The record gives the reactivity of an RNA of 207 nucleotides to 2A3. For 2A3, 1,076 sequencing reads were counted.
RNA sequence: GGGAACGACUCGAGUAGAGUCGAAAAAUCAGGCGAUGGAAGAAUCGCGCCGCCGCGGCGACGACGCCCGAGGCACAGCGGGCCGCGAACGCCAAGGUGAGGCAGUGGCAAGGCGCCAUGCGCAACCACCUUGCUGCCCACCCCGACCUACGUCGUCCAUUGAGCGAAUGUUCGCAUUCGCUCAAUGAAAAGAAACAACAACAACAAC
Reactivity to 2A3 in 0.01 (KOAc 150mM, MgCl2 10mM, bicine 150mM(pH8.5), 24C), signal-to-noise 2, nucleotides 027 to 156: a000u170c070a030g000g040c030g020a020u070g060g130a190a110g070a140a100u030c000g020c000g030c010c010g000c030c030g050c050g000g020c010g010a030c020g000a020c040g000c000c020c020g050a050g200g010c080a040c010a070g030c020g000g000g060c010c060g010c020g010a080a020c030g010c030c000a000a010g030g010u020g020a150g010g000c010a010g040u080g090g000c050a120a150g170g020c050g040c060c050a070u210g000c070g000c050a050a180c020c020a020c000c020u050u120g000c000u020g000c020c000c000a040c020c000c010c040g080a080c000c040u070a010c020g010u000c000g020u020c000